[RMDB]
Structure probing data (DMS and 2A3) for a 177-nucleotide construct.
2A3 is a SHAPE reagent: it acylates the 2'-hydroxyl of flexible nucleotides of all four kinds.
It was measured as part of the RMDB library TTRDEL.
RNA sequence: GGGAACGACUCGAGUAGAGUCGAAAAGAUAUGGAGACACGGGAGCAGUGCUCGGAAACGAGCAUACUGCAUCGAUCGUGCUCCUAAGUCAAACGCAUGAUCUGGUGUUCGCACCAGAUCAUGCGAAGAAUGCAUGUUGCUUCGGCAACAUGCAUUCAAAAGAAACAACAACAACAAC
Reactivity to DMS in 0.01 (KOAc 150mM, MgCl2 10mM, bicine 150mM(pH8.5), 24C), signal-to-noise 1, nucleotides 027 to 126: g000a040u020a300u020g000g000a010g000a180c000a040c000g010g000g000a020g010c020a000g000u000g000c000u000c000g000g000a080a030a150c000g010a000g020c000a070u000a060c030u000g000c000a180u000c160g010a050u000c010g020u000g000c010u000c000c000u000a050a090g000u000c010a080a100a240c020g000c000a000u010g010a010u010c000u010g000g040u000g020u000u020c210g030c020a020c000c000a000g000a000u020c000a010u000g020c010g000a070a040
Reactivity to 2A3 in 0.01 (KOAc 150mM, MgCl2 10mM, bicine 150mM(pH8.5), 24C), signal-to-noise 1, nucleotides 027 to 126: g040a010u060a000u130g030g020a020g050a070c010a010c010g050g000g010a050g000c020a020g030u000g010c000u000c000g000g000a060a010a000c010g020a010g010c020a020u150a070c020u030g040c010a180u260c000g050a070u010c010g030u010g010c010u000c000c000u030a160a000g000u010c060a180a020a000c030g010c000a010u010g020a010u000c000u000g010g010u020g110u140u090c300g010c110a000c030c040a000g000a000u010c000a010u010g000c000g000a000a010